RNA sequence: GGGAACGACUCGAGUAGAGUCGAAAAGAUAUGGAGGUGCACAGACAUGAACUUCGGAAACGAAUCUGUUCAACAGCUGUGUACCUCCUAAGUCAAACUGAACACACCGUUCGCGGUGUGUUCAGAACUACGCUGUAACCUUCGGGUUACAGCGUAGAAAAGAAACAACAACAACAAC
Reactivity to DMS in 0.01 (KOAc 150mM, MgCl2 10mM, bicine 150mM(pH8.5), 24C), signal-to-noise 1, nucleotides 027 to 126: g000a010u000a280u020g010g000a060g020g000u000g000c000a020c010a000g000a130c180a140u010g000a000a010c020u010u050c020g020g010a000a040a130c000g010a040a030u050c240u000g020u000u000c000a020a130c300a120g030c010u000g000u000g000u000a010c000c000u010c000c000u010a000a010g010u010c010a130a130a160c000u000g000a000a010c010a000c000a000c000c010g070u010u030c190g000c000g010g020u010g010u000g010u000u000c000a000g000a060a160
Reactivity to 2A3 in 0.01 (KOAc 150mM, MgCl2 10mM, bicine 150mM(pH8.5), 24C), signal-to-noise 1, nucleotides 027 to 126: g000a000u000a020u100g030g000a000g000g010u000g060c020a010c010a020g240a210c040a160u040g010a000a000c000u000u000c020g000g010a020a000a020c020g000a020a050u160c110u250g030u000u000c040a090a080c060a190g140c030u000g000u030g000u000a000c000c000u000c000c020u000a000a000g000u000c010a020a050a080c010u000g010a000a000c000a000c010a000c010c000g040u090u090c300g000c040g210g000u020g000u000g010u000u000c000a010g000a010a000
Background: The record gives the reactivity of an RNA of 177 nucleotides to DMS and 2A3. The reactions ran in a buffer of 150 mM KOAc, 10 mM MgCl2 and 150 mM bicine (pH 8.5), at 24 C.